[RMDB]
RNA sequence: GGGAACGACUCGAGUAGAGUCGAAAAUGUGUGCUCGAGAGCCUCCCUGUCCGACAGAGCUAUUAGAUCUUCUGAUCUUUCCCUGGAGGAUAUCGCUUAUGCUUCAAGCGAUUCUCGGAAUAAUUAAGUCUUCCUAAUACUUCGGUAUUAGGAAGACAAAAGAAACAACAACAACAAC
Reactivity to DMS in 0.01 (KOAc 150mM, MgCl2 10mM, bicine 150mM(pH8.5), 24C), signal-to-noise 3, nucleotides 027 to 126: u010g010u000g010u010g010c030u010c000g000a090g000a230g000c020c040u000c010c010c050u010g000u000c010c000g000a200c040a040g000a050g020c300u000a070u000u000a030g000a030u000c000u010u020c250u020g010a020u000c010u000u000u000c010c020c010u000g000g000a230g020g000a040u000a020u000c010g010c000u010u010a090u020g010c140u030u000c110a050a020g030c000g000a020u000u000c030u010c010g000g010a120a070u020a120a070u020u010a060a150
Reactivity to 2A3 in 0.01 (KOAc 150mM, MgCl2 10mM, bicine 150mM(pH8.5), 24C), signal-to-noise 3, nucleotides 027 to 126: u130g080u000g020u060g000c020u050c090g050a050g000a000g040c010c000u000c000c010c000u030g050u000c020c030g000a030c010a040g030a020g040c070u060a110u150u070a070g040a060u000c000u300u110c140u300g000a040u030c000u030u060u000c010c000c010u000g050g000a010g030g000a040u010a010u040c020g000c020u080u070a080u270g110c020u140u120c070a000a020g040c000g010a020u100u000c030u030c010g080g040a100a150u170a070a080u190u110a140a020
Structure probing data (DMS and 2A3) for a 177-nucleotide construct. 2A3 adducts were read by reverse transcription with SuperScript II with manganese. The 2A3 profile rests on 2,102 reads. The reactions ran in a buffer of 150 mM KOAc, 10 mM MgCl2 and 150 mM bicine (pH 8.5), at 24 C.